An RNA of 170 nucleotides, treated with DMS and 2A3 and read out base by base. DMS adducts were read by reverse transcription with MarathonRT. For 2A3 the reverse transcriptase was SuperScript II with manganese. It was measured as part of the RMDB library 15KLIB. The RNA was probed in 150 mM KOAc, 10 mM MgCl2 and 150 mM bicine (pH 8.5) at 24 C.
RNA sequence: GGGAACGACUCGAGUAGAGUCGAAAAACAAAGUCUAUGAUAUUGGCAAUCCUAAAGGAAUUCCUAUUGUUGAUGACCCUGUGGUUGAUUGGCAUUAUUUUGAUGCACAGCCCUUGACCAGGAAGGUAACCGCUAAUCUUCGGAUUAGCGAAAAGAAACAACAACAACAAC
Reactivity to DMS in 0.01 (KOAc 150mM, MgCl2 10mM, bicine 150mM(pH8.5), 24C), signal-to-noise 6, nucleotides 027 to 129: a060c150a050a040a100g000u020c000u030a010u040g000a050u030a060u060u000g030g020c000a040a040u000c040c010u000a040a060a070g000g000a090a110u000u000c030c020u040a100u000u000g040u010u020g000a080u010g000a080c020c010c010u020g040u010g030g010u000u040g030a070u040u050g010g020c050a000u000u000a100u020u030u060u040g030a030u010g000c040a080c000a100g030c040c040c070u010u000g000a080c020c060a110g020g030a070a030g040g000u060a090a080c150
Reactivity to 2A3 in 0.01 (KOAc 150mM, MgCl2 10mM, bicine 150mM(pH8.5), 24C), signal-to-noise 8, nucleotides 027 to 129: a030c060a000a070a000g010u000c020u020a070u110g130a080u050a050u190u130g040g000c030a020a010u030c020c010u130a060a050a070g080g000a040a090u080u070c010c010u060a080u070u100g050u040u070g040a110u050g040a050c000c010c010u030g030u080g050g000u000u020g040a140u030u130g070g000c010a010u020u060a090u040u260u110u220g010a030u020g000c020a020c000a090g020c010c000c000u010u040g020a040c000c020a000g070g030a050a040g030g040u040a000a050c020